[RMDB]
RNA sequence: GGGAACGACUCGAGUAGAGUCGAAAACGGGGUGACCGGCCAGGGCUGCCAUCUCACCCUGAGAGUCCCUCUUUUCCACUUGCAGGUGUACGAGAGGCUAGAGAAGCUGCAGGCAGUGGUGGCGGGAAAUUAAUCGUAGCUUCGGCUACGAUUAAUUAAAAGAAACAACAACAACAAC
Reactivity to DMS in 0.01 (KOAc 150mM, MgCl2 10mM, bicine 150mM(pH8.5), 24C), signal-to-noise 3, nucleotides 027 to 126: c090g020g010g010g040u010g010a050c300c140g020g030c030c070a130g020g000g000c140u000g000c030c020a070u010c090u010c020a060c030c000c010u010g000a080g020a150g000u000c010c010c010u000c070u000u000u000u000c070c040a080c050u000u000g020c070a080g010g020u000g010u010a080c170g010a120g000a110g010g020c050u010a070g000a110g000a140a090g010c040u010g000c060a050g000g010c080a040g030u010g020g020u000g000g020c060g000g010g000a060
Reactivity to 2A3 in 0.01 (KOAc 150mM, MgCl2 10mM, bicine 150mM(pH8.5), 24C), signal-to-noise 1, nucleotides 027 to 126: c030g000g000g010g030u030g000a020c060c060g020g000c050c030a160g040g190g000c150u100g000c040c000a090u060c040u000c020a000c000c000c000u000g020a050g000a020g060u010c030c010c000u030c000u060u050u030u020c040c000a080c040u040u170g020c050a010g100g070u040g050u060a040c010g010a020g000a000g090g000c020u080a020g010a030g050a270a000g030c020u040g000c030a040g040g000c030a040g030u050g110g020u020g000g010c000g000g040g030a010
The data come from the RNA Mapping Database (RMDB), library OK2TRN. Structure probing data (DMS and 2A3) for a 177-nucleotide construct. 2A3 adducts were read by reverse transcription with SuperScript II with manganese. DMS adducts were read by reverse transcription with MarathonRT. Values are in units of 0.01, from 0 to 300, in steps of 10.